[RMDB]
RNA sequence: GGGAACGACUCGAGUAGAGUCGAAAAGAUAUGGACGUGUAGCUCUUUUGACGUUGUGUAUCGGAAACGAUACAUACAACGAUAAGAGCUACACGUCCUAAGUCAAAGCGUUACUUCGGUAACGCAACUAACGGUUGUCGUUCGCGACAACCGUUAGAAAAGAAACAACAACAACAAC
Reactivity to DMS in 0.01 (KOAc 150mM, MgCl2 10mM, bicine 150mM(pH8.5), 24C), signal-to-noise 1, nucleotides 027 to 126: g000a030u020a300u000g010g000a010c000g030u000g000u000a000g000c010u000c000u000u030u010u010g000a140c090g000u000u000g000u000g000u000a000u000c010g010g000a090a060a180c040g060a010u000a010c010a060u040a220c020a000a020c000g020a180u000a020a010g000a020g020c000u000a000c000a000c000g010u000c060c000u000a000a080g030u000c050a130a110a140g000c010g000u000u010a000c000u000u040c270g040g000u000a000a000c020g010c000a010a100

Structure probing data (DMS) for a 177-nucleotide construct.
DMS adducts were read by reverse transcription with MarathonRT.
It was measured as part of the RMDB library TTRDES.